[RMDB]
RNA sequence: GGGAACGACUCGAGUAGAGUCGAAAAACGAACUGGUGAGGGAUCUAGUCUCAGUUAUCAGGGCUCGUAAUUAUGUCGAAGCGACCAGGAGAUAUCAUCAUUUCCACUCCAGGAUCCAAGGUUCGUCAAUGUCAUCUCGUUUCGACGAGAUGACAUUAAAAGAAACAACAACAACAAC
Reactivity to 2A3 in 0.01 (KOAc 150mM, MgCl2 10mM, bicine 150mM(pH8.5), 24C), signal-to-noise 5, nucleotides 027 to 126: a000c030g020a010a000c010u030g000g030u100g120a100g020g040g050a030u000c030u080a050g070u070c010u010c030a160g060u150u140a140u200c070a030g000g020g030c020u000c020g020u020a080a170u200u220a160u210g150u100c020g050a130a000g020c030g040a050c000c010a020g070g000a010g020a020u100a050u080c080a020u000c000a000u070u070u000c010c020a060c010u000c010c060a060g000g040a020u030c020c010a040a030g060g000u010u010c010g010u020c030
Reactivity to DMS in 0.01 (KOAc 150mM, MgCl2 10mM, bicine 150mM(pH8.5), 24C), signal-to-noise 3, nucleotides 027 to 126: a040c050g000a020a020c000u010g010g000u000g010a120g010g010g010a020u030c050u010a110g030u000c040u010c040a070g040u060u060a090u030c200a060g000g000g050c060u000c050g020u000a060a120u020u030a040u040g030u000c030g000a050a060g010c040g020a090c040c060a130g000g000a030g000a060u010a060u020c170a080u040c100a060u020u010u000c050c020a130c030u000c030c110a080g000g020a020u000c030c050a060a110g000g000u000u000c040g020u020c160